[RMDB]
RNA sequence: GGGAACGACUCGAGUAGAGUCGAAAAGAAGGCCGGCAAAGGAAGCCCCAUCUGCUUAGGCAAGUCAAAAUUUGAGCCUUUGCAGCAGACUGUCUCCGGGAGGUGCCUUGAAACAGAUCUCGCCUCCAUAGAAAUAUGGUUUCGACCAUAUUUCUAUAAAAGAAACAACAACAACAAC
Reactivity to DMS in 0.01 (KOAc 150mM, MgCl2 10mM, bicine 150mM(pH8.5), 24C), signal-to-noise 5, nucleotides 027 to 126: g000a140a100g010g010c030c080g020g010c140a030a060a110g000g000a090a120g000c060c010c020c050a130u010c030u000g000c010u010u000a020g010g010c010a120a090g000u010c130a050a070a100a160u000u000u010g000a190g010c010c010u000u000u000g010c030a040g000c290a050g000a100c070u000g000u000c030u000c020c050g000g020g000a080g010g020u000g020c110c030u000u010g010a050a080a080c140a070g000a080u000c030u000c040g010c010c020u000c040c050
Reactivity to 2A3 in 0.01 (KOAc 150mM, MgCl2 10mM, bicine 150mM(pH8.5), 24C), signal-to-noise 3, nucleotides 027 to 126: g050a060a010g020g000c060c090g040g060c120a120a040a010g100g050a070a020g030c010c020c010c010a040u000c010u020g000c000u020u000a020g020g000c040a060a020g110u090c060a070a110a260a300u180u140u210g050a040g020c000c000u010u000u020g000c010a010g030c010a020g010a070c040u080g040u040c020u040c040c030g020g010g000a010g000g000u040g030c010c000u010u020g020a050a050a020c020a030g060a110u010c020u020c080g010c000c010u000c020c000